[RMDB]
RNA sequence: GGGAACGACUCGAGUAGAGUCGAAAAAGAAAUCUUGUGCAACGGCCGAGGCGAUCGGAUUGCGACGUCGCCUGAGAAGGCGGGACCCAACGUCGCGCCUUUCGCCAGACGAUGGAUACUCUUGCACCAUCAAUUUGAACUUCGGUUCAAAUUGAUGAAAAGAAACAACAACAACAAC
Reactivity to 2A3 in 0.01 (KOAc 150mM, MgCl2 10mM, bicine 150mM(pH8.5), 24C), signal-to-noise 1, nucleotides 027 to 126: a000g090a010a050a020u040c030u060u040g000u000g000c000a030a010c060g030g010c060c060g090a080g000g000c000g000a010u010c020g000g060a070u070u300g000c040g000a000c000g050u230c040g000c020c010u030g020a030g020a050a020g010g000c050g010g050g000a050c010c010c020a000a010c000g000u010c000g020c020g030c020c020u010u010u000c020g000c000c000a010g040a030c060g060a070u180g040g030a050u060a180c030u010c010u080u010g000c000a000c000
Reactivity to DMS in 0.01 (KOAc 150mM, MgCl2 10mM, bicine 150mM(pH8.5), 24C), signal-to-noise 2, nucleotides 027 to 126: a060g000a110a090a020u010c040u020u000g030u000g030c040a030a040c200g020g030c050c010g000a160g030g010c010g010a010u010c040g000g000a060u000u000g040c010g010a040c020g020u000c040g010c010c000u000g010a250g000a190a030g020g000c000g000g000g010a160c050c030c050a160a020c020g000u000c000g030c020g010c000c000u000u000u000c000g010c000c020a060g000a090c220g000a080u010g010g000a120u000a090c080u010c100u000u010g000c010a030c000
An RNA of 177 nucleotides, treated with 2A3 and DMS and read out base by base.
The data come from the RNA Mapping Database (RMDB), library RFMREP.
Conditions: 150 mM KOAc, 10 mM MgCl2 and 150 mM bicine (pH 8.5), 24 C.
For 2A3 the reverse transcriptase was SuperScript II with manganese.